[RMDB]
RNA sequence: GGGAACGACUCGAGUAGAGUCGAAAAUCAAUCAUGUUCGCAUGAUUGAAAAGGUGAGGUGACCAAACCACGACACGCGUCGAAGCGACCGAGCCCGGAGGCAAAGUGCAAUCUUCGGAUUGCACAACGUCCUCUAUCUCUUCGGAGAUAGAGGACGAAAAGAAACAACAACAACAAC
Reactivity to 2A3 in 0.01 (KOAc 150mM, MgCl2 10mM, bicine 150mM(pH8.5), 24C), signal-to-noise 1, nucleotides 027 to 126: u010c010a010a000u000c000a000u000g000u080u030c200g050c120a000u010g000a030u020u000g020a050a020a000a060g050g040u080g040a060g000g040u060g040a090c030c000a120a040a010c070c010a020c060g060a040c040a000c100g110c030g060u040c040g070a060a000g030c020g040a090c030c020g000a010g030c000c060c000g030g070a050g030g000c060a100a070a020g010u000g020c010a000a020u010c010u000u060c170g130g000a010u000u030g000c010a000c000a000a000
Reactivity to DMS in 0.01 (KOAc 150mM, MgCl2 10mM, bicine 150mM(pH8.5), 24C), signal-to-noise 2, nucleotides 027 to 126: u000c000a000a000u010c000a020u000g010u000u020c200g030c000a020u000g000a000u000u000g000a000a050a120a130g000g010u000g000a180g000g000u000g010a060c010c070a040a160a040c060c030a130c060g000a060c070a040c140g000c070g010u020c070g000a090a100g000c040g020a090c040c050g010a090g010c000c000c050g010g030a040g010g000c130a060a030a100g000u010g010c000a020a010u010c000u000u000c170g050g000a000u000u000g000c000a000c000a040a090
Description:
Chemical mapping of a 177-nucleotide RNA with 2A3 and DMS. Conditions: 150 mM KOAc, 10 mM MgCl2 and 150 mM bicine (pH 8.5), 24 C. High 2A3 reactivity points to a flexible backbone, as in loops and unpaired stretches.